The record gives the reactivity of an RNA of 177 nucleotides to 2A3 and DMS.

[RMDB]
RNA sequence: GGGAACGACUCGAGUAGAGUCGAAAAUCUUGCUCAAAUGAGUAUUCCAAAGAGAUGCAGAAUGCUAUGGUUUGUUAAUCCGUAGAAUAUUCUUGUGUUUCUGUGUAUCAGUUUGGAAGUGCAUCUGGCGUUAAACAAAUUUCGAUUUGUUUAACGCAAAAGAAACAACAACAACAAC
Reactivity to 2A3 in 0.01 (KOAc 150mM, MgCl2 10mM, bicine 150mM(pH8.5), 24C), signal-to-noise 7, nucleotides 027 to 126: u030c010u020u120g020c030u040c080a180a230a210u300g000a000g040u060a090u040u050c020c000a070a040a010g030a010g010a010u040g000c000a000g010a030a000u020g000c000u000a010u020g030g080u050u070u130g240u120u220a130a080u040c000c000g010u030a000g060a150a080u140a050u150u040c070u100u110g010u030g030u030u040u000c020u000g050u020g030u060a100u080c020a060g070u010u030u030g040g000a100a040g040u040g070c030a070u010c050u030g010
Reactivity to DMS in 0.01 (KOAc 150mM, MgCl2 10mM, bicine 150mM(pH8.5), 24C), signal-to-noise 6, nucleotides 027 to 126: u020c060u010u010g010c030u000c030a130a110a080u030g000a070g020u000a080u000u000c040c050a070a060a030g000a020g010a020u000g020c010a020g010a010a010u000g000c000u000a000u000g000g010u000u000u010g020u020u030a080a050u010c010c010g010u000a010g000a060a070u020a020u000u000c010u010u020g040u000g010u000u010u000c000u000g020u010g010u010a090u020c140a090g010u000u000u010g000g000a080a090g010u000g000c120a060u010c050u010g000

For 2A3 the reverse transcriptase was SuperScript II with manganese.